Overview
An RNA of 177 nucleotides, treated with 2A3 and DMS and read out base by base. The 2A3 profile rests on 1,195 reads. For DMS, 848 sequencing reads were counted. For 2A3 the reverse transcriptase was SuperScript II with manganese. DMS adducts were read by reverse transcription with MarathonRT. Conditions: 150 mM KOAc, 10 mM MgCl2 and 150 mM bicine (pH 8.5), 24 C. Source: RMDB library OK2TST, as collected in RNAgym. High DMS reactivity at an A or C suggests that its Watson-Crick edge is free.
RNA sequence: GGGAACGACUCGAGUAGAGUCGAAAACGUACAUAUGAUAUCCGCGCAAGGUAACCUUAGCACCAAUCUCCAUGCCUUCACGUAACUUAAAGUUCGCAAUCGACUUUCGUGCCUUAGUUUUUACCGCGGUCAUGCUAGUGUUCGCACUAGCAUGACCAAAAGAAACAACAACAACAAC
Reactivity to 2A3 in 0.01 (KOAc 150mM, MgCl2 10mM, bicine 150mM(pH8.5), 24C), signal-to-noise 2, nucleotides 027 to 126: c020g120u140a010c040a100u210a130u190g110a060u040a040u090c000c020g000c000g000c070a000a100g020g000u050a060a050c010c010u040u130a010g000c030a020c020c010a030a080u030c020u000c010c000a040u040g020c010c040u070u090c050a050c050g020u040a060a040c010u070u120a140a050a000g020u070u060c070g080c090a010a240u040c000g060a020c010u100u080u030c030g000u020g040c000c020u110u090a040g050u010u010u090u060u160a090c030c060g020c000
Reactivity to DMS in 0.01 (KOAc 150mM, MgCl2 10mM, bicine 150mM(pH8.5), 24C), signal-to-noise 1, nucleotides 027 to 126: c020g000u020a080c130a140u010a110u000g000a080u020a070u010c010c030g080c080g020c100a090a040g000g000u020a150a050c060c050u000u000a100g020c110a080c040c080a020a100u010c020u020c020c050a100u010g040c050c010u000u000c060a040c060g040u020a080a080c150u000u000a050a030a120g030u000u000c010g010c110a030a040u020c020g000a030c050u000u000u030c100g000u000g030c040c030u000u030a030g000u000u000u000u010u000a120c050c100g040c180